An RNA of 207 nucleotides, treated with 2A3 and read out base by base.
RNA sequence: GGGAACGACUCGAGUAGAGUCGAAAAUAAGAAAAAUAAACAAGUGGUGGUAGUCCGCCACUCUAAGGGGACGCCUUUAGAAGAAGAGGCUAGGUGGUAUUCCGGUGUGGGAUACUUGGUCAUAUGUAAGGGGAUGGUACGUUCGCGUACCAUCCAAUCACUUGACAUACUUCGGUAUGUCAAGUGAAAAAGAAACAACAACAACAAC
Reactivity to 2A3 in 0.01 (KOAc 150mM, MgCl2 10mM, bicine 150mM(pH8.5), 24C), signal-to-noise 1, nucleotides 027 to 156: u150a090a090g090a050a050a030a000a010u250a130a200a060c120a300a070g010u040g000g040u020g040g120u020a000g000u000c010c000g000c000c000a000c020u000c000u000a000a000g010g000g000g070a010c100g090c010c050u000u000u070a020g040a060a000g000a000a000g020a080g000g000c040u040a030g020g020u070g030g020u070a000u060u000c040c080g220g000u300g000u250g060g000g000a000u010a030c000u020u040g090g010u050c060a090u170a100u260g140u120a070a140g070g000g000g040a000u000g000g010u000a010c040g000u010u190c270g020c000g120u000a000c000c000a000u000c000c000a000a000
The 2A3 profile rests on 478 reads. The reactions ran in a buffer of 150 mM KOAc, 10 mM MgCl2 and 150 mM bicine (pH 8.5), at 24 C.